[RMDB]
RNA sequence: GGGAACGACUCGAGUAGAGUCGAAAAGGAGAAUUCGGUCAAAGCGGGACCGUAUUCGAGCGCCGAGGCACCGACAUAACAGCCCACAUCGUGACCGGCCAGGUCAUCGGGAUUGAUCCCGCUGUUCCACUCUGACGCAUUUCGAUGCGUCAGAGUGAAAAGAAACAACAACAACAAC
Reactivity to DMS in 0.01 (KOAc 150mM, MgCl2 10mM, bicine 150mM(pH8.5), 24C), signal-to-noise 2, nucleotides 027 to 126: g000g000a200g010a030a050u000u000c010g010g000u000c060a090a080a070g000c070g020g010g010a030c000c000g000u000a000u000u000c040g020a150g030c080g010c040c050g010a100g000g000c030a090c050c010g000a060c080a060u000a090a050c130a100g000c020c010c030a070c150a090u010c050g000u000g010a040c020c000g010g010c180c190a140g020g010u000c010a020u010c040g010g020g000a160u000u010g000a110u010c030c000c000g030c070u010g000u010u000c080
Reactivity to 2A3 in 0.01 (KOAc 150mM, MgCl2 10mM, bicine 150mM(pH8.5), 24C), signal-to-noise 2, nucleotides 027 to 126: g070g020a090g010a030a040u070u080c010g000g020u040c040a170a050a050g080c040g030g030g030a010c000c000g000u020a020u000u010c000g010a070g030c060g000c030c050g060a070g040g030c020a020c070c020g080a040c020a080u220a210a040c000a030g030c000c040c010a050c040a100u110c040g030u020g020a010c000c000g050g120c100c050a050g070g000u040c000a010u080c060g020g030g030a070u050u200g060a110u080c000c010c010g010c000u000g050u150u040c030
The data come from the RNA Mapping Database (RMDB), library OK2TST. An RNA of 177 nucleotides, treated with DMS and 2A3 and read out base by base. The RNA was probed in 150 mM KOAc, 10 mM MgCl2 and 150 mM bicine (pH 8.5) at 24 C. The DMS profile rests on 1,952 reads.